[RMDB]
RNA sequence: GGGAACGACUCGAGUAGAGUCGAAAAAAGAGGAAGAGAGGGCCUAAGAGCAGUGGGAAUGGGAACAUGGAGGAAAGCCUAUCCUGUUUGUUUCCUCCUCCAGAAACAGAGGUGGAAGCUUGGUCCGUUAAUCUUGGGUCUUCGGACCCAAGAUUAAAAAAGAAACAACAACAACAAC
Reactivity to DMS in 0.01 (KOAc 150mM, MgCl2 10mM, bicine 150mM(pH8.5), 24C), signal-to-noise 4, nucleotides 027 to 126: a070a040g030a070g020g000a040a060g010a080g020a090g000g000g000c060c030u020a100a040g000a140g020c060a070g040u030g030g000g000a140a060u010g000g000g020a060a060c110a030u000g010g000a060g010g010a060a100a090g000c070c040u000a050u020c010c010u000g000u030u010u010g000u010u000u000c000c030u010c030c000u000c010c080a120g010a140a070a100c280a130g000a050g000g000u000g000g000a040a030g000c050u050u000g020g010u000c020c020g020
Reactivity to 2A3 in 0.01 (KOAc 150mM, MgCl2 10mM, bicine 150mM(pH8.5), 24C), signal-to-noise 4, nucleotides 027 to 126: a000a000g160a030g050g040a070a000g080a000g060a070g050g010g030c000c030u090a120a030g050a040g020c050a020g030u090g030g050g030a100a140u130g000g000g020a040a070c050a070u100g020g010a030g050g040a100a070a060g020c000c010u030a020u040c000c010u110g070u060u120u020g020u000u030u000c010c000u000c000c000u010c000c020a080g140a080a110a020c050a020g000a010g040g000u010g010g010a030a000g000c010u020u040g040g020u020c010c010g030
Chemical mapping of a 177-nucleotide RNA with DMS and 2A3. The RNA was probed in 150 mM KOAc, 10 mM MgCl2 and 150 mM bicine (pH 8.5) at 24 C. The DMS profile rests on 6,828 reads.